The record gives the reactivity of an RNA of 177 nucleotides to 2A3 and DMS. DMS adducts were read by reverse transcription with MarathonRT. The RNA was probed in 150 mM KOAc, 10 mM MgCl2 and 150 mM bicine (pH 8.5) at 24 C. For 2A3 the reverse transcriptase was SuperScript II with manganese.
RNA sequence: GGGAACGACUCGAGUAGAGUCGAAAAGAUCCGUAACUUCGGGAAAAGGAUUGGCUCUGAGGGUUGGGCCUAGGGGUCUUUUUGGAGAACUUGUGGCGGCCUACGUUGGGCUGCGUCUGGACCUUUCUAACAUGUUAGCUUUCGAGCUAACAUGUUAAAAAGAAACAACAACAACAAC
Reactivity to 2A3 in 0.01 (KOAc 150mM, MgCl2 10mM, bicine 150mM(pH8.5), 24C), signal-to-noise 7, nucleotides 027 to 126: g030a030u010c000c000g020u020a010a080c020u080u110c130g050g010g010a000a020a000a080g060g020a090u070u070g010g000c010u000c030u060g070a120g010g080g030u060u050g030g030g000c000c000u000a030g000g010g020g010u020c000u030u060u030u070u100g100g020a070g020a060a040c040u090u090g060u100g140g000c000g020g010c010c010u080a130c100g150u160u210g020g000g000c000u010g000c010g050u010c040u030g030g020a030c010c000u000u030u030c010
Reactivity to DMS in 0.01 (KOAc 150mM, MgCl2 10mM, bicine 150mM(pH8.5), 24C), signal-to-noise 7, nucleotides 027 to 126: g000a030u000c000c010g000u010a110a170c050u000u040c120g030g010g020a100a060a120a150g000g000a050u010u000g010g010c010u000c010u010g010a210g010g000g010u010u010g010g010g010c010c010u010a050g000g010g000g000u000c000u010u010u000u030u030g020g020a080g010a070a090c080u010u010g010u020g010g020c010g010g020c010c000u000a090c250g010u040u030g010g000g000c000u010g000c030g010u010c060u010g000g000a120c090c010u000u000u000c040